This 177-nucleotide RNA was probed chemically with DMS and 2A3. DMS adducts were read by reverse transcription with MarathonRT. The 2A3 profile rests on 3,139 reads. 2A3 adducts were read by reverse transcription with SuperScript II with manganese. Reactivities are given for positions 27 through 126.

RNA sequence: GGGAACGACUCGAGUAGAGUCGAAAACGAACAGAUCGAGCAUUGGAUUCAGGAGCAGCCAAUCGGUUCCGAUUUUCACCAGAACGAAGCCGCGACCACCCCAGCCGAUCCGCUCCCGAAGGAAAGGCUCCUAGCUAGUAUUCGUACUAGCUAGGAGAAAAGAAACAACAACAACAAC
Reactivity to DMS in 0.01 (KOAc 150mM, MgCl2 10mM, bicine 150mM(pH8.5), 24C), signal-to-noise 4, nucleotides 027 to 126: c150g000a110a090c110a050g000a040u000c050g010a100g020c040a080u010u000g000g010a120u010u000c130a120g000g000a300g020c050a050g000c090c050a090a060u000c040g010g010u000u000c040c020g000a130u010u000u000u030c120a110c120c050a150g000a040a070c030g020a070a090g020c010c030g020c050g000a090c020c040a180c110c060c020c050a040g010c030c010g010a100u000c020c020g010c050u000c000c010c000g010a100a120g000g000a040a060a110g000g000
Reactivity to 2A3 in 0.01 (KOAc 150mM, MgCl2 10mM, bicine 150mM(pH8.5), 24C), signal-to-noise 3, nucleotides 027 to 126: c020g010a030a010c030a060g050a060u040c010g010a050g100c040a120u130u190g020g030a050u190u150c090a110g000g040a040g010c030a010g020c030c030a040a040u060c040g090g010u030u050c020c010g020a050u060u020u100u210c120a120c030c010a030g010a080a030c030g010a070a010g010c010c020g040c010g010a050c010c020a030c000c040c000c000a000g010c000c000g010a020u010c000c020g000c020u020c000c000c030g050a060a020g030g050a110a020a030g040g030